[RMDB]
RNA sequence: GGGAACGACUCGAGUAGAGUCGAAAAGAAUCAAACGGAAGGGACGGAUGGUAUCUUCGGAUGCCAUAGAUAGAUGGCUACCGCUCUUGGUGCGAGGGAUACGUCCCGCUUGCAGCACGGGAGAGACCUCAUGAUAAUAGUUCGCUAUUAUCAUGAGAAAAGAAACAACAACAACAAC
Reactivity to DMS in 0.01 (KOAc 150mM, MgCl2 10mM, bicine 150mM(pH8.5), 24C), signal-to-noise 9, nucleotides 027 to 126: g010a110a090u010c090a070a090a120c090g000g010a090a070g010g000g010a100c070g010g010a050u000g010g010u010a020u000c010u000u010c180g020g010a050u000g000c000c010a010u010a020g010a130u010a090g000a090u000g000g000c040u000a120c060c030g010c040u010c020u000u000g030g060u000g010c040g000a050g020g010g000a050u000a060c190g010u000c010c000c000g010c240u000u000g010c110a070g010c020a040c030g000g000g000a050g010a130g010a100c190
Reactivity to 2A3 in 0.01 (KOAc 150mM, MgCl2 10mM, bicine 150mM(pH8.5), 24C), signal-to-noise 7, nucleotides 027 to 126: g050a020a060u120c050a060a020a060c070g030g040a050a040g060g010g050a010c030g030g030a020u020g020g010u030a040u020c010u030u050c150g060g000a010u030g000c000c010a000u010a010g060a010u060a020g130a050u060g060g000c030u070a080c020c020g020c030u010c010u030u060g220g000u010g000c010g010a060g000g000g020a020u030a050c160g080u010c010c010c010g010c010u040u070g010c030a010g000c010a010c000g000g020g010a020g000a000g030a030c010

An RNA of 177 nucleotides, treated with DMS and 2A3 and read out base by base. 2A3 adducts were read by reverse transcription with SuperScript II with manganese. The RNA was probed in 150 mM KOAc, 10 mM MgCl2 and 150 mM bicine (pH 8.5) at 24 C. DMS adducts were read by reverse transcription with MarathonRT.